Record summary:
Chemical mapping of a 177-nucleotide RNA with DMS and 2A3. The RNA was probed in 150 mM KOAc, 10 mM MgCl2 and 150 mM bicine (pH 8.5) at 24 C. It was measured as part of the RMDB library OK2TRN. For DMS, 15,018 sequencing reads were counted.

RNA sequence: GGGAACGACUCGAGUAGAGUCGAAAAGAUCACCUCGGGAUCAGUGCAGAGAUAUGUCUCAAUCCCCCUGUGGGCACAGCCUAGACAAGAGUUACAUCACCUCGGUUAACAGUGCAGAGAUAUGUCAGCGUAUAGUACAAUUCGUUGUACUAUACGCAAAAGAAACAACAACAACAAC
Reactivity to DMS in 0.01 (KOAc 150mM, MgCl2 10mM, bicine 150mM(pH8.5), 24C), signal-to-noise 9, nucleotides 027 to 126: g010a080u000c050a120c070c030u010c100g010g000g010a050u000c080a090g010u000g010c090a100g010a120g010a060u000a040u000g010u010c010u000c020a140a170u010c020c010c000c050c060u000g010u000g000g000g000c040a050c080a080g000c030c020u000a060g010a040c070a080a080g000a050g000u000u010a070c110a120u000c050a060c060c020u000c050g000g000u000u000a060a090c100a060g010u000g000c050a090g010a060g000a060u000a030u000g010u000c060a160
Reactivity to 2A3 in 0.01 (KOAc 150mM, MgCl2 10mM, bicine 150mM(pH8.5), 24C), signal-to-noise 6, nucleotides 027 to 126: g020a030u060c030a040c110c030u050c040g050g050g020a100u030c040a040g030u060g100c060a040g060a000g010a150u030a050u170g090u020c020u000c030a170a300u190c000c000c000c010c020u060g030u150g060g010g010c020a020c020a070g010c020c000u020a020g000a020c020a050a010g020a000g040u080u040a030c010a050u030c010a030c010c000u000c010g030g000u010u000a060a020c020a040g010u000g020c000a010g020a000g010a060u040a010u120g080u040c030a010